[RMDB]
RNA sequence: GGGAACGACUCGAGUAGAGUCGAAAAUGGAAGUCACUGUGGGUGAGUCAGUGAGUGAGUGGUGAGUGAAUGUGGAGGCCUAGAACAUUAUUGUACACUAAUGUUGACUUCACAAACACUGUGCACUUAGGCUACACUACAUUUAUAUUGAAAAGCAACUAGUGGUAGGGUUCGCCCUACCACUAGUAAAAGAAACAACAACAACAAC
Reactivity to DMS in 0.01 (KOAc 150mM, MgCl2 10mM, bicine 150mM(pH8.5), 24C), signal-to-noise 1, nucleotides 027 to 156: u000g060g010a080a120g030u000c050a050c090u010g040u000g000g000g050u000g000a130g000u010c030a050g020u030g000a130g020u040g000a010g070u020g070g010u050g020a090g050u000g040a100a290u000g000u020g080g050a060g050g000c050c210u020a170g020a060a060c070a020u000u020a040u000u000g000u010a110c160a100c300u000a030a020u000g000u000u020g000a070c010u000u000c040a000c050a050a000a260c010a070c030u020g160u020g000c020a050c030u000u000a110g010g020c010u000a080c050a020c050u000a070c040a070u020u010u010a080u010a160u000u000g010a090a090a060a120g000c030a140
Reactivity to 2A3 in 0.01 (KOAc 150mM, MgCl2 10mM, bicine 150mM(pH8.5), 24C), signal-to-noise 2, nucleotides 027 to 156: u060g050g040a010a020g040u030c040a000c080u050g000u090g070g000g050u020g030a020g070u110c050a010g030u000g110a000g040u110g020a000g010u040g010g080u290g030a000g000u010g010a020a030u020g000u010g000g020a010g030g000c010c080u070a060g130a100a000c000a010u030u020a040u030u140g160u170a030c120a030c070u030a010a010u010g020u000u020g080a070c000u000u030c010a020c000a030a050a010c050a000c000u010g060u140g010c020a000c000u000u030a080g040g020c000u070a040c050a010c020u100a010c030a060u120u300u070a180u020a030u110u140g090a050a040a130a000g150c050a040
Conditions: 150 mM KOAc, 10 mM MgCl2 and 150 mM bicine (pH 8.5), 24 C.
The record gives the reactivity of an RNA of 207 nucleotides to DMS and 2A3.
For DMS the reverse transcriptase was MarathonRT.
For 2A3, 1,022 sequencing reads were counted.